[RMDB]
RNA sequence: GGGAACGACUCGAGUAGAGUCGAAAAGAUAUGGAGUUGUAGGUACAAUAUGGGAGUCUCGGGAGAGCUCGGAAACGAGCUCUUCUCUAGCGUGGACGACGAUCAUAUUCGGAAUGACAACUCCUAAGUCAAAGUCGCCUUCUUCGGAAGGCGACAACAUACGAUGUGCCUUCGGGCACAUCGUAUGAAAAGAAACAACAACAACAAC
Reactivity to 2A3 in 0.01 (KOAc 150mM, MgCl2 10mM, bicine 150mM(pH8.5), 24C), signal-to-noise 1, nucleotides 027 to 156: g000a000u010a010u050g000g000a010g000u000u000g000u020a020g020g000u060a020c000a010a010u010a000u010g010g000g010a010g000u020c020u020c040g040g010g000a000g000a000g000c010u000c000g000g010a000a000a000c000g000a010g040c010u010c040u030u000c020u000c010u010a080g010c160g190u300g040g000a010c020g070a060c010g000a010u000c020a000u000a000u030u140c230g010g030a060a000u000g000a020c000a000a000c000u000c000c000u000a000a000g000u000c050a030a110a050g010u000c000g000c000c000u000u000c000u050u030c240g060g010a000a000g000g000c000g000a000c000a000a000

Chemical mapping of a 207-nucleotide RNA with 2A3.
For 2A3, 1,615 sequencing reads were counted.
It was measured as part of the RMDB library RNAMAK.
The reactions ran in a buffer of 150 mM KOAc, 10 mM MgCl2 and 150 mM bicine (pH 8.5), at 24 C.